[RMDB]
RNA sequence: GGGAACGACUCGAGUAGAGUCGAAAAGACCUACCACAGCUGGGGCCGCGCCGUUAACCGCGGUCGCUCCGGCCCAUGACACCCCGCCAGUGCCUGAUGUCGACUCUCGCGGCGCCAUCCUGCGCCGUCAUGGACACAGAUUCGUCUGUGUCCAUGAAAAAGAAACAACAACAACAAC
Reactivity to DMS in 0.01 (KOAc 150mM, MgCl2 10mM, bicine 150mM(pH8.5), 24C), signal-to-noise 5, nucleotides 027 to 126: g010a130c020c020u010a100c080c060a070c140a130g020c040u010g010g000g000g010c120c090g020c120g000c020c020g000u000u000a100a130c240c220g000c010g010g020u000c060g000c030u010c050c030g010g000c020c060c030a080u000g000a110c120a090c050c020c010c070g000c040c040a070g000u000g000c020c020u000g000a060u010g000u000c010g020a070c040u000c020u000c090g010c000g000g010c010g010c010c030a080u010c060c040u010g000c020g030c000c010g020
Reactivity to 2A3 in 0.01 (KOAc 150mM, MgCl2 10mM, bicine 150mM(pH8.5), 24C), signal-to-noise 2, nucleotides 027 to 126: g020a010c000c000u020a040c020c040a040c010a050g000c030u040g000g000g030g040c040c020g030c050g020c030c010g130u160u040a070a040c000c030g010c010g000g010u000c010g010c020u050c030c030g030g000c020c010c010a040u100g020a020c010a080c000c000c020c000g010c020c030a040g010u060g040c000c030u050g040a090u090g070u060c000g040a060c000u020c000u030c050g030c010g010g000c000g010c000c000a120u040c010c020u050g000c000g000c000c010g000
Chemical mapping of a 177-nucleotide RNA with DMS and 2A3.
The reactions ran in a buffer of 150 mM KOAc, 10 mM MgCl2 and 150 mM bicine (pH 8.5), at 24 C.
The 2A3 profile rests on 3,531 reads.
For 2A3 the reverse transcriptase was SuperScript II with manganese.
Values cover nucleotides 27 to 126.
DMS adducts were read by reverse transcription with MarathonRT.